[RMDB]
RNA sequence: GGGAACGACUCGAGUAGAGUCGAAAAAGCAUCGGAGCGUGUACGCACGCUCCGAUGCAUCGUCCUGAAAACGAAACGGAACAAAAGUUCAAGAUAUUGAUUUCGAAUCGUUUAUCAGGAUGAUGAAUAAAGAUUUCGUUUUCGAACGAAAUCUUUAAAAAGAAACAACAACAACAAC
Reactivity to DMS in 0.01 (KOAc 150mM, MgCl2 10mM, bicine 150mM(pH8.5), 24C), signal-to-noise 2, nucleotides 027 to 126: a060g060c020a030u010c020g000g000a060g090c000g200u020g060u010a180c220g000c000a030c010g040c000u010c000c000g000a000u000g000c000a000u000c020g000u000c000c000u010g000a000a050a030a010c010g000a010a050a300c000g000g000a030a000c030a030a040a200a190g010u030u020c160a120a130g000a140u070a080u000u000g000a110u000u000u010c010g000a000a220u000c000g000u000u000u010a130u030c000a010g000g010a000u000g010a020u000g010a200a120
Reactivity to 2A3 in 0.01 (KOAc 150mM, MgCl2 10mM, bicine 150mM(pH8.5), 24C), signal-to-noise 3, nucleotides 027 to 126: a000g070c000a000u000c000g000g030a000g000c280g000u000g050u100a040c300g010c220a030c000g000c000u000c000c000g020a000u000g000c010a000u000c000g010u000c000c010u010g000a010a000a000a000c000g000a000a000a000c000g010g040a030a010c010a010a060a080a030g140u280u210c120a220a050g110a100u160a130u170u150g150a300u100u000u030c000g000a020a040u000c000g000u000u040u020a300u020c000a000g040g000a000u000g000a000u030g020a000a040